[RMDB]
RNA sequence: GGGAACGACUCGAGUAGAGUCGAAAAUUCAUCAGCCGCAGCAAUGACUUCAUCGUCACGAAUAGAACCACCCGGUUGGAUGACACAGGUGAUCCCGACGGCUGCAGCUGCAUCAAUACCGUCGCGGAAGCGCGAGGUCAUUCGUGACCUCGCGCUUAAAAGAAACAACAACAACAAC
Reactivity to DMS in 0.01 (KOAc 150mM, MgCl2 10mM, bicine 150mM(pH8.5), 24C), signal-to-noise 1, nucleotides 027 to 126: u000u020c080a080u010c030a070g010c050c040g090c000a050g090c110a190a070u010g010a060c020u000u010c210a040u000c270g000u000c000a100c050g010a070a160u000a050g000a080a080c110c000a070c060c070c120g010g010u000u000g010g000a050u010g000a210c160a030c080a100g010g020u010g010a090u000c010c000c050g000a100c070g030g000c060u000g010c040a090g020c030u000g020c070a020u000c230a070a100u000a180c030c010g000u000c050g000c120g030g020